[RMDB]
RNA sequence: GGGAACGACUCGAGUAGAGUCGAAAAAGGAGUAGAGUGGCCUUGGUGGCAUGUCGCUUUGAGCAAAGCGUAAAAAGCUCAAAUUAAAAUUAAACGCAAACAACGUUAAAUUCGCUCCUGCUUAUGCUAAAGCUGCGUAAGUUCAGUUGAGCCUGAAGGGACCUAUUAAGUUCGCUUAAUAGGUCCCAAAAGAAACAACAACAACAAC
Reactivity to DMS in 0.01 (KOAc 150mM, MgCl2 10mM, bicine 150mM(pH8.5), 24C), signal-to-noise 1, nucleotides 027 to 156: a050g000g040a060g000u010a090g020a120g050u000g010g030c080c050u000u010g000g010u000g000g000c060a100u020g010u000c040g000c070u000u010u010g020a020g050c060a080a100a190g040c060g010u010a020a040a110a040a110g000c020u020c050a030a030a120u020u000a050a030a120a170u000u020a080a040a080c020g000c010a090a100a160c100a050a070c020g040u020u050a090a070a190u000u000c040g000c030u000c050c010u020g000c060u000u000a060u010g010c000u010a060a140a180g010c240u010g000c020g030u010a020a100g010u000u000c020a010g010u000u010g000a050g040c100c020u000g010a100a300
Reactivity to 2A3 in 0.01 (KOAc 150mM, MgCl2 10mM, bicine 150mM(pH8.5), 24C), signal-to-noise 2, nucleotides 027 to 156: a000g020g010a020g000u110a020g060a030g040u070g020g000c030c020u010u020g060g000u020g030g030c060a030u040g040u060c030g000c040u010u010u010g010a010g000c030a050a210a120g010c010g090u200a050a000a080a090a030g000c000u000c000a000a020a020u030u030a010a000a000a010u070u130a070a060a000c020g030c060a150a070a050c030a060a040c040g020u060u150a100a140a040u110u120c030g010c000u000c000c010u000g000c000u000u000a010u020g000c010u110a190a040a080g110c190u060g000c040g000u000a000a000g010u060u170c060a000g000u100u080g120a000g010c000c020u050g020a060a060
The data come from the RNA Mapping Database (RMDB), library ARCHII. Chemical mapping of a 207-nucleotide RNA with DMS and 2A3. For 2A3 the reverse transcriptase was SuperScript II with manganese. The reactions ran in a buffer of 150 mM KOAc, 10 mM MgCl2 and 150 mM bicine (pH 8.5), at 24 C. The DMS profile rests on 1,607 reads. For 2A3, 1,062 sequencing reads were counted.